Structure probing data (DMS and 2A3) for a 177-nucleotide construct. 2A3 adducts were read by reverse transcription with SuperScript II with manganese. It was measured as part of the RMDB library TTRDES. Conditions: 150 mM KOAc, 10 mM MgCl2 and 150 mM bicine (pH 8.5), 24 C.
[RMDB]
RNA sequence: GGGAACGACUCGAGUAGAGUCGAAAAAAAGAUAUGGAUUUCGUAAGACGCUUGGAUUUAUAGGCCUUUCACAUCGGAAACGAUGUGUUUGGCCUAUUGUCAGCGUUAUCGAAAUCCUAAGUCAAAAGUAUAUAACACGGUUCGCCGUGUUAUAUACAAAAGAAACAACAACAACAAC
Reactivity to DMS in 0.01 (KOAc 150mM, MgCl2 10mM, bicine 150mM(pH8.5), 24C), signal-to-noise 3, nucleotides 027 to 126: a100a090a090g000a070u000a300u010g000g000a020u000u000u000c000g020u000a130a300g000a030c020g020c000u010u030g020g000a010u000u000u000a000u000a000g010g000c000c000u000u000u000c000a010c000a000u000c010g000g010a150a060a210c000g010a000u000g020u000g000u000u000u000g010g010c000c000u000a000u000u010g010u000c000a050g010c000g020u000u000a180u000c000g000a000a010a010u000c000c000u010a020a070g010u010c040a070a120a110a160
Reactivity to 2A3 in 0.01 (KOAc 150mM, MgCl2 10mM, bicine 150mM(pH8.5), 24C), signal-to-noise 2, nucleotides 027 to 126: a000a010a000g080a030u140a040u170g010g000a010u000u000u010c000g020u070a300a190g090a040c010g050c040u180u300g280g010a080u180u300u020a040u050a010g000g010c010c000u000u020u010c000a010c010a010u010c000g020g070a100a060a070c010g000a010u010g020u000g030u010u010u000g000g020c000c000u000a010u000u000g000u000c000a000g000c000g000u020u020a030u030c000g010a000a000a000u010c010c000u000a120a020g060u030c020a060a000a070a100